This 207-nucleotide RNA was probed chemically with DMS and 2A3. For 2A3, 469 sequencing reads were counted. For 2A3 the reverse transcriptase was SuperScript II with manganese. For DMS, 4,202 sequencing reads were counted.
[RMDB]
RNA sequence: GGGAACGACUCGAGUAGAGUCGAAAACAAUUUUUAAAUGUCAUAUUCCUUUUCUCCAAACUCUUUAACCACAAGAAUUCAGGGAAGGUUAUGGGGGGUGACUUAGUUAUCUGGAUAAUACAUAUUGUGGACAAUAUAGCAUUAUCCUUGGGAAUGAUAAUCCCGUAAUAUUCGUAUUACGGGAUUAAAAAGAAACAACAACAACAAC
Reactivity to DMS in 0.01 (KOAc 150mM, MgCl2 10mM, bicine 150mM(pH8.5), 24C), signal-to-noise 2, nucleotides 027 to 156: c020a100a050u020u000u010u000u030a050a070a110u000g010u000c010a060u000a120u000u000c010c010u000u000u000u000c010u000c020c060a070a050a050c000u000c020u010u000u010a070a160c300c280a140c130a050a050g010a040a070u000u000c040a060g000g000g000a040a030g000g020u000u000a050u020g020g000g000g020g050g050u000g020a120c080u000u010a100g010u010u000a040u010c080u000g010g010a020u000a030a000u000a010c000a050u000a020u000u000g020u000g020g040a180c030a010a000u000a020u000a130g030c020a030u000u000a010u000c000c020u000u000g020g010g000a080a090u000g010a210
Reactivity to 2A3 in 0.01 (KOAc 150mM, MgCl2 10mM, bicine 150mM(pH8.5), 24C), signal-to-noise 1, nucleotides 027 to 156: c050a050a040u100u100u150u290u300a260a130a120u180g030u050c030a010u010a130u160u070c000c000u080u020u030u080c030u050c030c000a140a070a070c010u020c050u100u190u120a090a020c000c010a020c030a180a050g110a120a070u300u190c080a120g020g000g000a000a060g120g000u050u050a000u120g040g000g020g000g000g000u000g030a000c050u110u000a060g110u150u020a070u170c070u050g000g000a000u000a000a000u000a030c000a000u000a000u000u040g050u130g040g090a030c000a000a000u010a000u010a080g020c010a010u000u000a000u010c000c000u000u090g050g020g050a130a000u050g000a050